[RMDB]
RNA sequence: GGGAACGACUCGAGUAGAGUCGAAAAGAUAUGGACCGUGAACUACGCUCCCAUGGACAGCUUUGAUCUAUUUACUUCGGAAACGAAGUAAAUAGGGAGCUGUUGAGGGAGCGCACGGUCCUAAGUCCAUCUAGUUUUUGUUCGCAAAAACUAGAUGAAAAGAAACAACAACAACAAC
Reactivity to 2A3 in 0.01 (KOAc 150mM, MgCl2 10mM, bicine 150mM(pH8.5), 24C), signal-to-noise 2, nucleotides 027 to 126: g050a050u110a080u180g010g000a000c000c020g010u010g030a090a140c160u210a060c300g020c000u000c000c030c030a130u300g170g020a000c000a000g010c010u300u300u140g100a090u110c010u000a000u000u000u010a010c000u010u000c010g030g050a120a080a060c010g010a010a000g000u000a000a010a000u010a010g000g000g000a000g000c010u000g010u000u020g020a100g000g020g010a000g000c000g000c010a000c000g010g010u010c000c000u000a000a000g000u000c000
Reactivity to DMS in 0.01 (KOAc 150mM, MgCl2 10mM, bicine 150mM(pH8.5), 24C), signal-to-noise 5, nucleotides 027 to 126: g010a080u000a300u010g010g010a020c000c000g000u000g000a150a120c190u010a300c030g000c000u000c000c000c000a080u010g000g000a010c010a000g010c000u010u000u020g000a070u010c000u000a000u000u000u000a000c000u000u000c000g000g000a150a090a250c000g020a010a010g000u000a000a000a000u000a010g000g000g000a000g030c000u000g010u000u000g010a240g010g000g000a010g010c010g020c010a000c000g010g000u000c000c000u000a000a060g000u000c040
Overview: Structure probing data (2A3 and DMS) for a 177-nucleotide construct. For 2A3, 11,442 sequencing reads were counted. The data come from the RNA Mapping Database (RMDB), library TTRINS. DMS adducts were read by reverse transcription with MarathonRT. The reactions ran in a buffer of 150 mM KOAc, 10 mM MgCl2 and 150 mM bicine (pH 8.5), at 24 C.